This 207-nucleotide RNA was probed chemically with 2A3 and DMS.
Source: RMDB library RNAMAK, as collected in RNAgym.
The 2A3 profile rests on 1,762 reads.
For DMS the reverse transcriptase was MarathonRT.
The reactions ran in a buffer of 150 mM KOAc, 10 mM MgCl2 and 150 mM bicine (pH 8.5), at 24 C.

[RMDB]
RNA sequence: GGGAACGACUCGAGUAGAGUCGAAAACCGUAGGCGAUGAACUACGAAGCGAUAUACUCGAAGAACUAGACUUCGAAAGAGGUCUAGGGAGAGUAUAAUGCUUCGCAUCGCCUAAACGGAAAACAUCUCUUAAGUUCUUCGGAACUUAAGAGAUGAACUAAAAAAGAACGUUCGCGUUCUUUUUUAGAAAAGAAACAACAACAACAAC
Reactivity to 2A3 in 0.01 (KOAc 150mM, MgCl2 10mM, bicine 150mM(pH8.5), 24C), signal-to-noise 2, nucleotides 027 to 156: c000c000g010u010a010g000g010c020g010a010u010g010a150a100c080u110a050c300g010a000a000g010c010g070a040u010a000u000a060c000u000c060g190a300a040g010a030a010c000u000a000g000a010c010u000u010c020g010a010a020a040g010a000g020g000u000c010u010a000g000g000g010a020g010a000g000u000a000u010a000a030u090g010c010u000u010c000g000c000a000u010c000g000c010c000u000a020a000a000c000g020g030a030a110a020a130c000a000u030c000u000c000u000u010a010a010g000u010u000c020u040u130c270g120g000a000a000c000u000u000a000a010g000a010g000a000u000g000a000a010
Reactivity to DMS in 0.01 (KOAc 150mM, MgCl2 10mM, bicine 150mM(pH8.5), 24C), signal-to-noise 1, nucleotides 027 to 156: c020c000g030u000a030g010g000c020g050a030u000g000a110a300c000u000a210c000g000a060a020g070c010g050a130u000a000u000a010c010u000c000g000a170a220g060a140a180c010u020a030g000a050c000u010u000c000g000a120a130a300g000a000g000g020u000c000u000a000g020g010g000a150g020a050g010u010a010u000a020a090u000g010c020u000u020c000g000c000a030u000c000g000c000c020u000a000a020a090c000g000g000a130a030a110a120c000a020u000c000u010c000u000u000a010a020g030u000u000c000u000u010c300g050g040a010a000c000u000u000a000a030g000a030g040a000u010g030a030a130